RNA sequence: GGGAACGACUCGAGUAGAGUCGAAAAGUGUAUCGUUCGCGAUACACAACUACGCAUGAGGAUAGAGGAAGUCGUGUAGAAGCGACUGGUCGAGAAAUUCGCCGAUAGCGUCACGUUCGCGUGACGCACAUUCUUCGUUGUUCGCAACGAAGAAUGUAAAAGAAACAACAACAACAAC
Reactivity to 2A3 in 0.01 (KOAc 150mM, MgCl2 10mM, bicine 150mM(pH8.5), 24C), signal-to-noise 6, nucleotides 027 to 126: g000u000g000u010a010u010c020g020u010u080c270g010c020g100a000u000a000c000a010c000a010a010c010u080a030c050g020c040a060u130g060a050g110g070a110u140a220g120a070g130g120a110a030g040u040c040g020u010g010u080a060g030a180a010g050c000g020a010c010u030g020g130u060c020g010a000g040a040a100a060u090u040c070g100c170c010g080a070u080a090g000c000g010u000c000a010c000g010u040u040c200g020c020g060u000g000a000c000g000c010
Reactivity to DMS in 0.01 (KOAc 150mM, MgCl2 10mM, bicine 150mM(pH8.5), 24C), signal-to-noise 5, nucleotides 027 to 126: g010u000g010u010a000u000c000g020u010u020c230g010c020g020a010u000a010c000a000c000a090a140c050u010a060c080g000c060a080u010g010a090g020g000a140u000a080g010a130g000g010a110a070g020u000c050g020u000g000u000a080g000a130a210g020c040g010a030c020u000g000g020u010c030g010a020g000a050a100a150u000u000c020g000c020c040g000a110u020a100g000c000g000u000c000a010c000g000u000u010c180g000c010g040u000g000a010c000g010c000

Chemical mapping of a 177-nucleotide RNA with 2A3 and DMS.
The RNA was probed in 150 mM KOAc, 10 mM MgCl2 and 150 mM bicine (pH 8.5) at 24 C.
As a SHAPE reagent, 2A3 marks flexible, mostly unpaired nucleotides at the ribose 2'-OH.
For 2A3, 7,284 sequencing reads were counted.
Reactivities are given for positions 27 through 126.